RNA sequence: GGGAACGACUCGAGUAGAGUCGAAAAGUUGGAAGUGAUGAUUUCAUACAGUUUUUCAUUCCAGAAUUGUAUGCAUCGUUUUUGUGCAGAUUGUAUAUUACAAAGAAUACACACUGGAGCGAGGAAGAUUAAUGGCUCCAUUCGUGGAGCCAUUAAUAAAAGAAACAACAACAACAAC
Reactivity to 2A3 in 0.01 (KOAc 150mM, MgCl2 10mM, bicine 150mM(pH8.5), 24C), signal-to-noise 1, nucleotides 027 to 126: g110u110u150g080g050a190a130g050u060g010a040u020g020a090u140u140u180c010a090u050a040c020a030g000u000u030u130u010u070c090a130u150u060c020c060a010g000a060a040u000u050g000u040a000u000g000c000a010u060c040g030u010u080u000u030u080g070u070g010c020a020g010a300u060u030g020u000a020u000a020u000u070a030c020a010a130a000g130a000a150u020a000c000a000c000a000c070u020g050g000a070g000c000g000a020g050g020a050a000g050
Reactivity to DMS in 0.01 (KOAc 150mM, MgCl2 10mM, bicine 150mM(pH8.5), 24C), signal-to-noise 3, nucleotides 027 to 126: g010u000u000g000g010a180a110g000u010g010a050u020g000a120u000u010u000c010a060u010a090c130a060g010u040u010u000u010u020c090a080u010u030c080c050a090g000a050a070u010u000g000u010a010u000g000c170a040u000c080g010u000u020u030u020u050g030u000g010c030a020g000a110u030u010g020u000a030u060a060u020u040a080c100a030a040a100g020a150a050u000a020c060a010c210a110c070u000g000g000a040g010c040g000a040g000g000a060a050g000